An RNA of 177 nucleotides, treated with DMS and 2A3 and read out base by base. The RNA was probed in 150 mM KOAc, 10 mM MgCl2 and 150 mM bicine (pH 8.5) at 24 C. For 2A3, 2,073 sequencing reads were counted. The data come from the RNA Mapping Database (RMDB), library VIROID. For 2A3 the reverse transcriptase was SuperScript II with manganese.
RNA sequence: GGGAACGACUCGAGUAGAGUCGAAAACAGCUGUCUACAAGCAAGAAUAGUCCAGCCGAGGUCCCAAAGUAGAAACCUGUCUGGGAAAGGAUGCACCAGGGCUGGAGAUAGCUCCGGCGAGGUGCAACAUUGUCCAAUACUUCGGUAUUGGACAAUGAAAAGAAACAACAACAACAAC
Reactivity to DMS in 0.01 (KOAc 150mM, MgCl2 10mM, bicine 150mM(pH8.5), 24C), signal-to-noise 3, nucleotides 027 to 126: c090a150g000c030u010g010u010c020u000a100c070a090a080g000c050a070a110g010a130a130u000a060g010u000c050c020a040g020c010c040g020a100g010g020u000c030c010c050a050a060a120g010u000a050g010a100a100a110c040c030u000g010u000c060u000g010g010g010a040a040a070g010g020a130u000g020c000a010c000c000a040g020g020g030c000u010g000g000a000g000a260u030a150g000c010u000c000c000g020g000c000g000a170g000g000u010g020c030a020a100
Reactivity to 2A3 in 0.01 (KOAc 150mM, MgCl2 10mM, bicine 150mM(pH8.5), 24C), signal-to-noise 2, nucleotides 027 to 126: c020a020g040c000u040g030u110c000u060a060c070a140a000g040c020a020a050g080a120a130u100a090g050u060c010c040a010g000c020c020g140a030g000g040u040c000c000c030a040a060a000g110u120a050g120a160a080a020c010c020u040g040u080c040u070g050g000g040a020a100a050g110g020a060u060g010c000a010c000c000a030g080g290g000c020u010g020g000a010g000a010u170a030g140c030u010c010c000g000g000c010g010a040g000g010u000g020c000a010a000